[RMDB]
Chemical mapping of a 177-nucleotide RNA with 2A3 and DMS. For DMS, 1,097 sequencing reads were counted. The data come from the RNA Mapping Database (RMDB), library OK2TRN. The 2A3 profile rests on 794 reads. As a SHAPE reagent, 2A3 marks flexible, mostly unpaired nucleotides at the ribose 2'-OH. DMS (dimethyl sulfate) methylates the pairing face of unpaired adenines and cytosines.
RNA sequence: GGGAACGACUCGAGUAGAGUCGAAAAUUGGAGCAAUGAAAUAGUCAAAGAUUCAAGGGAUAUGAACAAAGCAGGGUGGGGACAAUGAUGGCAUAUCCAUGUUUUAAAUUGUCAGAUUAGAGGGAAACCUAAUCAGCAGUUUCGACUGCUGAUUAGGAAAAGAAACAACAACAACAAC
Reactivity to 2A3 in 0.01 (KOAc 150mM, MgCl2 10mM, bicine 150mM(pH8.5), 24C), signal-to-noise 1, nucleotides 027 to 126: u040u100g010g000a050g020c040a000a100u040g060a150a070a070u130a190g060u130c020a050a050a050g020a130u070u110c060a060a050g050g010g000a040u060a090u280g050a120a050c100a080a090a000g090c080a000g080g030g110u190g000g000g000g000a010c020a010a030u060g000a000u070g040g020c000a010u010a010u020c060c020a010u000g040u010u090u000u020a000a120a070u080u020g000u020c010a010g020a270u050u110a040g010a060g090g030g020a000a030a010
Reactivity to DMS in 0.01 (KOAc 150mM, MgCl2 10mM, bicine 150mM(pH8.5), 24C), signal-to-noise 2, nucleotides 027 to 126: u000u000g000g000a270g010c090a060a180u000g000a060a100a140u010a100g000u000c050a050a080a150g000a100u000u000c060a040a050g000g000g000a070u000a060u030g000a030a140c110a090a100a110g000c050a070g000g000g010u000g010g000g000g010a040c090a050a030u000g010a180u020g000g000c010a030u000a060u000c070c070a060u000g000u000u000u000u000a000a150a070u000u000g010u000c010a080g010a120u000u000a030g000a080g000g010g000a130a120a160